This 177-nucleotide RNA was probed chemically with 2A3 and DMS.
The RNA was probed in 150 mM KOAc, 10 mM MgCl2 and 150 mM bicine (pH 8.5) at 24 C.
Values cover nucleotides 27 to 126.

[RMDB]
RNA sequence: GGGAACGACUCGAGUAGAGUCGAAAAGUGGACGCUGCCUGGCCAGCGGCAGGCCGCACUGCGCGUCAGGAACGGCGCCACCCGCGCCGUACGCGAUAUCUGGCGCGCCGGCCGGCGCGCUUCGCGAGAUCAUAAAUAGUUUCGACUAUUUAUGAUCAAAAGAAACAACAACAACAAC
Reactivity to 2A3 in 0.01 (KOAc 150mM, MgCl2 10mM, bicine 150mM(pH8.5), 24C), signal-to-noise 3, nucleotides 027 to 126: g020u030g000g020a010c030g000c090u190g000c030c050u090g030g010c010c010a040g000c000g030g010c040a080g170g130c000c000g000c030a070c090u090g010c010g010c000g000u010c000a010g050g000a070a010c000g010g000c020g030c010c020a140c030c010c010g000c010g000c000c010g030u060a060c080g030c030g070a020u020a040u190c010u010g010g000c000g000c000g010c010c030g010g020c000c000g020g020c000g000c000g000c060u010u020c010g000c010g020a050
Reactivity to DMS in 0.01 (KOAc 150mM, MgCl2 10mM, bicine 150mM(pH8.5), 24C), signal-to-noise 4, nucleotides 027 to 126: g020u010g000g010a050c030g010c010u000g030c020c010u010g040g010c030c030a220g020c040g000g010c110a110g010g000c020c020g030c080a150c230u000g010c020g010c030g020u010c020a050g010g000a100a050c010g010g010c000g010c020c050a150c220c110c080g000c030g010c000c040g010u000a030c050g020c040g000a070u010a090u000c040u000g000g010c040g040c070g120c060c300g000g010c030c040g040g050c080g040c050g010c110u000u000c010g020c020g010a130